[RMDB]
RNA sequence: GGGAACGACUCGAGUAGAGUCGAAAAAGCCACGCAGGUUGCAAAUGAGAUAGCAAUGGGAGCACAUAAAGACAUCCUACUUAGAGGUGCAGUUGGAUCAGGGAAAUCGACUGGCUUACCAUCUCAACCUAACGAAAAGUUUCGACUUUUCGUUAGGAAAAGAAACAACAACAACAAC
Reactivity to DMS in 0.01 (KOAc 150mM, MgCl2 10mM, bicine 150mM(pH8.5), 24C), signal-to-noise 6, nucleotides 027 to 126: a090g000c020c020a060c130g020c090a100g020g010u000u010g010c080a060a100a100u010g000a100g000a130u000a080g020c060a050a060u000g010g010g010a060g000c050a060c080a080u010a060a070a060g010a080c100a050u000c060c020u000a060c090u000u000a100g010a080g000g000u000g000c040a040g010u000u000g020g000a050u000c050a110g000g000g010a060a070a060u010c040g010a040c080u000g010g000c030u000u010a140c140c040a070u000c020u000c050a060a220
Reactivity to 2A3 in 0.01 (KOAc 150mM, MgCl2 10mM, bicine 150mM(pH8.5), 24C), signal-to-noise 7, nucleotides 027 to 126: a000g010c010c010a010c040g020c060a040g030g090u090u080g030c020a050a090a110u150g030a090g030a070u080a040g040c040a050a070u090g030g030g020a040g020c040a020c010a110u180a060a090a010g050a030c020a060u040c020c010u020a080c020u080u060a050g020a030g070g040u050g010c010a010g010u040u050g050g030a060u040c070a090g050g010g040a020a040a020u030c010g020a030c020u020g000g020c010u010u030a060c010c010a060u010c010u000c020a040a100
This 177-nucleotide RNA was probed chemically with DMS and 2A3. The reactions ran in a buffer of 150 mM KOAc, 10 mM MgCl2 and 150 mM bicine (pH 8.5), at 24 C. Source: RMDB library OK2TST, as collected in RNAgym. The 2A3 profile rests on 12,198 reads. The DMS profile rests on 7,201 reads.